[RMDB]
Source: RMDB library OK2TRN, as collected in RNAgym.
An RNA of 177 nucleotides, treated with 2A3 and DMS and read out base by base.
DMS adducts were read by reverse transcription with MarathonRT.
RNA sequence: GGGAACGACUCGAGUAGAGUCGAAAAAGUACGAUCCACGUACGUACCAUAGGAUCACGCUAGCGUCGAUCCAUGGAGUACUCUAGGUACAUAUCGACUAGUGCUAGAGCGAGUCAUGCGUGAUCUGAACUCGGAUCGUUUUCGAACGAUCCGAGUUAAAAGAAACAACAACAACAAC
Reactivity to 2A3 in 0.01 (KOAc 150mM, MgCl2 10mM, bicine 150mM(pH8.5), 24C), signal-to-noise 2, nucleotides 027 to 126: a000g020u010a010c000g020a090u110c080c040a130c080g030u000a010c020g000u030a060c000c020a000u070a130g020g010a000u010c000a010c020g000c030u040a020g050c010g120u010c060g040a030u030c030c000a010u040g040g010a070g050u020a030c000u040c060u120a050g000g180u100a020c010a020u090a040u050c060g050a060c010u050a030g130u050g090c040u030a020g020a030g070c040g070a030g100u110c030a040u150g020c040g040u070g020a020u000c010u040g040
Reactivity to DMS in 0.01 (KOAc 150mM, MgCl2 10mM, bicine 150mM(pH8.5), 24C), signal-to-noise 3, nucleotides 027 to 126: a160g010u010a000c010g000a130u020c140c200a210c120g000u000a010c010g000u000a200c020c000a050u000a140g000g000a010u010c020a020c010g030c030u000a140g000c040g010u010c060g000a020u000c020c090a050u000g010g020a150g000u010a030c020u000c100u000a060g020g030u000a040c020a110u000a180u010c050g020a050c040u000a080g000u000g010c010u000a050g020a070g020c020g020a130g000u000c060a040u000g020c040g000u000g020a020u010c010u000g000

Conditions: 150 mM KOAc, 10 mM MgCl2 and 150 mM bicine (pH 8.5), 24 C.